[RMDB]
RNA sequence: GGGAACGACUCGAGUAGAGUCGAAAACUGUCAUCUCAAAACACAAUUAGCAUCUCCACUAAGAAAUGGAGUUCAGAGGAUGUUAACAGGUAUAUAUAUACAAUGAAGCAAAAGAAUAAUAUUGGAAGCUAAACAAAGGCCAUUUAUCUCUGAUCAACCUCGGAGUGAUAUUCGUAUCACUCCGAGGAAAAGAAACAACAACAACAAC
Reactivity to 2A3 in 0.01 (KOAc 150mM, MgCl2 10mM, bicine 150mM(pH8.5), 24C), signal-to-noise 2, nucleotides 027 to 156: c020u030g070u050c010a100u030c080u000c070a060a110a170a040c140a030c020a070a180u070u040a000g040c000a050u080c030u000c000c020a000c030u230a210a050g030a140a090a000u050g030g000a030g070u040u020c030a020g030a030g000g040a000u020g010u110u120a040a020c000a000g000g090u030a090u020a000u000a000u000a000u020a140c020a080a050u080g060a040a000g030c050a000a050a040a080g100a000a100u170a170a020u090a110u100u050g060g020a030a010g030c020u040a140a000a100c040a010a060a020g020g020c020c010a020u030u080u060a110u050c080u050c020u060g080a090u220c010a020a000
This 207-nucleotide RNA was probed chemically with 2A3. The reactions ran in a buffer of 150 mM KOAc, 10 mM MgCl2 and 150 mM bicine (pH 8.5), at 24 C. For 2A3, 602 sequencing reads were counted. For 2A3 the reverse transcriptase was SuperScript II with manganese.